[RMDB]
RNA sequence: GGGAACGACUCGAGUAGAGUCGAAAAAUAGUGUUAUUCGUAACACUAUAUAUCCGAACUCAAGGAUUCGUUCCAGAGACAUGCAUCCUAGCAUGAAAGCAACUGAACAAGCGUUCGCGCUUGUUAAAACGCAUAUGCGGUUCGCCGCAUAUGCGUUAAAAGAAACAACAACAACAAC
Reactivity to DMS in 0.01 (KOAc 150mM, MgCl2 10mM, bicine 150mM(pH8.5), 24C), signal-to-noise 1, nucleotides 027 to 126: a010u000a000g000u000g010u000u000a000u010u000c180g050u000a000a030c000a000c010u000a020u000a020u010a080u000c060c020g020a110a040c010u000c000a060a220g040g000a020u000u000c010g000u000u000c000c000a090g010a170g010a220c020a010u000g040c000a120u010c230c230u000a160g050c010a000u000g000a090a110a140g020c080a040a040c100u040g000a030a000c000a000a020g020c010g050u000u020c230g060c030g030c000u010u000g000u010u000a010a050
Reactivity to 2A3 in 0.01 (KOAc 150mM, MgCl2 10mM, bicine 150mM(pH8.5), 24C), signal-to-noise 1, nucleotides 027 to 126: a000u010a000g000u010g010u010u040a030u050u070c210g040u070a000a010c010a020c000u000a000u000a010u000a010u000c030c000g010a160a060c000u000c000a010a120g140g010a000u050u000c000g000u010u010c000c000a000g020a000g010a110c020a000u010g010c000a060u080c050c040u100a050g040c000a000u030g050a070a000a010g050c040a070a090c080u240g060a020a000c050a010a000g000c010g020u050u040c160g030c000g000c120u040u000g010u010u010a010a050